The record gives the reactivity of an RNA of 177 nucleotides to DMS. The RNA was probed in 150 mM KOAc, 10 mM MgCl2 and 150 mM bicine (pH 8.5) at 24 C.

[RMDB]
RNA sequence: GGGAACGACUCGAGUAGAGUCGAAAAUCCUGUCCGAGUUCCCGUAUCAGCGAUUCCCGGAACGAGGGAUGAACCCCUUCCAGCCAGGUUUCGAAGGGCAGGGCGGAGGUCUCCUCCGGAGCGAGGAAAUCUAAGCCGGUUUCGACCGGCUUAGAUUAAAAGAAACAACAACAACAAC
Reactivity to DMS in 0.01 (KOAc 150mM, MgCl2 10mM, bicine 150mM(pH8.5), 24C), signal-to-noise 1, nucleotides 027 to 126: u000c000c000u000g010u000c010c000g030a250g000u000u000c000c000c000g000u000a130u000c110a130g020c030g000a080u000u010c020c000c050g010g000a110a080c300g010a060g020g000g010a080u000g010a100a240c080c000c000c000u000u000c150c260a150g040c050c040a080g000g000u000u010u000c030g020a080a050g000g000g020c000a040g010g000g000c060g000g010a000g000g000u020c110u010c020c010u000c000c000g020g010a110g000c100g000a060g000g000a040